[RMDB]
RNA sequence: GGGAACGACUCGAGUAGAGUCGAAAAUGAUGCGUUGGUGUCAGGUGAUGAAAAUGCCCCUGCCAGAAUACAAUGUGAUGAGUCAUACGAACGGUACGUUUUGCAUACAGGUUGUGGUGGACGGUCUCGAUUGCGGGUGCGGAUUUGCAACUACGAAACUGGUUUUCAUAUUCGUAUGAAAACCAGUAAAAGAAACAACAACAACAAC
Reactivity to 2A3 in 0.01 (KOAc 150mM, MgCl2 10mM, bicine 150mM(pH8.5), 24C), signal-to-noise 3, nucleotides 027 to 156: u120g010a030u090g000c040g040u070u040g040g020u040g030u090c040a010g020g050u010g030a070u030g060a030a050a050a080u140g030c020c000c000c000u010g020c020c000a020g050a070a050u170a080c090a070a060u120g050u080g040a110u020g030a010g090u090c030a020u050a140c020g040a060a020c040g040g050u090a010c050g020u030u000u060u100g010c020a010u030a100c030a040g010g030u030u040g020u090g070g040u020g000g030a020c020g010g010u030c020u000c100g120a100u010u090g020c050g000g040g000u020g040c020g000g020a050u040u020u070g010c010a020a030c030u110a050c050g040a020a120
Reactivity to DMS in 0.01 (KOAc 150mM, MgCl2 10mM, bicine 150mM(pH8.5), 24C), signal-to-noise 3, nucleotides 027 to 156: u010g010a110u000g010c040g030u000u010g000g030u010g020u010c040a070g020g020u010g020a100u010g000a060a070a070a100u000g000c020c020c030c020u000g020c030c040a120g010a100a130u000a080c070a040a070u000g010u000g010a100u000g000a130g030u000c040a100u010a090c080g020a060a070c060g040g010u000a050c060g030u000u000u000u030g000c050a120u000a110c100a080g050g030u000u000g030u000g010g000u020g020g010a090c060g020g010u000c040u020c020g000a130u000u000g010c020g020g000g040u000g000c040g010g020a140u000u000u000g000c030a070a080c050u000a100c050g000a100a100
Source: RMDB library OK3TST, as collected in RNAgym. The record gives the reactivity of an RNA of 207 nucleotides to 2A3 and DMS. For 2A3 the reverse transcriptase was SuperScript II with manganese. Values are in units of 0.01, from 0 to 300, in steps of 10.